[RMDB]
RNA sequence: GGGAACGACUCGAGUAGAGUCGAAAAGAUAUGGACGGUGAACUACUUGGUAAGAGCCGAAGAACUCGGAAACGAGGGAGGCUCGAAACAAGCACCGUCCUAAGUCAAACGAACCUUCGGGUUCGAACGGAUAUAUCCAGUUCGCUGGAUAUAUCCGAAAAGAAACAACAACAACAAC
Reactivity to 2A3 in 0.01 (KOAc 150mM, MgCl2 10mM, bicine 150mM(pH8.5), 24C), signal-to-noise 2, nucleotides 027 to 126: g010a030u110a070u140g000g010a000c000g000g000u000g040a080a080c090u190a010c020u300u000g000g030u030a090a030g010a010g000c000c060g120a150a030g010a040a020c010u010c000g010g050a110a040a040c020g000a010g000g000g020a020g010g070c010u000c010g000a010a040a000c000a000a010g000c000a000c000c000g000u020c000c000u000a000a010g020u000c000a020a020a080c020g000a000a000c000c000u000u080c260g120g010g000u020u030c010g020a070a020
Reactivity to DMS in 0.01 (KOAc 150mM, MgCl2 10mM, bicine 150mM(pH8.5), 24C), signal-to-noise 3, nucleotides 027 to 126: g020a040u000a300u010g040g000a020c000g010g000u000g000a100a070c070u010a300c000u010u000g000g000u000a090a250g000a020g030c010c000g010a100a060g020a080a270c000u000c000g000g000a110a040a120c010g010a020g000g000g020a140g000g020c000u000c010g000a030a090a070c040a000a000g000c010a010c000c000g030u000c010c020u000a010a070g010u000c030a060a080a280c060g000a000a000c010c010u000u010c170g000g000g010u010u000c000g010a080a060
Structure probing data (2A3 and DMS) for a 177-nucleotide construct. It was measured as part of the RMDB library TTRDEL. The 2A3 profile rests on 4,658 reads.